The record gives the reactivity of an RNA of 177 nucleotides to 2A3 and DMS. The RNA was probed in 150 mM KOAc, 10 mM MgCl2 and 150 mM bicine (pH 8.5) at 24 C. For DMS, 1,103 sequencing reads were counted. For DMS the reverse transcriptase was MarathonRT.
RNA sequence: GGGAACGACUCGAGUAGAGUCGAAAAGCCGAGGCAUGAGAAUCGGUUGGACUUAGGAGGCGGAGGCUACAGUGAGCCGAGCUCAUGCCACUGUACUCCAGCCUGGGCAACAGAACAAGACUCUGUCGGUGCAUGUAGACUUCGGUCUACAUGCACCAAAAGAAACAACAACAACAAC
Reactivity to 2A3 in 0.01 (KOAc 150mM, MgCl2 10mM, bicine 150mM(pH8.5), 24C), signal-to-noise 1, nucleotides 027 to 126: g020c000c010g050a030g040g000c060a070u150g040a000g020a180a110u040c040g000g050u000u050g130g050a080c010u090u020a130g040g120a040g070g030c040g010g060a010g030g030c000u010a030c000a010g030u050g080a020g020c010c000g040a030g040c020u030c040a010u020g000c000c000a010c020u000g030u020a010c010u000c030c010a040g040c010c000u050g040g010g000c030a060a010c020a040g050a010a010c060a090a060g060a090c010u010c020u080g030u070c090
Reactivity to DMS in 0.01 (KOAc 150mM, MgCl2 10mM, bicine 150mM(pH8.5), 24C), signal-to-noise 1, nucleotides 027 to 126: g010c040c010g000a080g000g020c020a040u000g010a050g010a090a100u000c010g000g030u010u000g000g020a130c050u040u020a040g000g000a090g010g030c050g010g010a110g000g000c110u000a020c080a040g010u000g010a080g000c010c150g000a070g000c030u000c120a100u000g000c010c000a000c010u000g000u000a040c040u000c000c030a110g010c030c010u000g000g010g000c070a120a080c050a060g020a090a110c150a100a050g000a230c080u010c030u010g010u010c090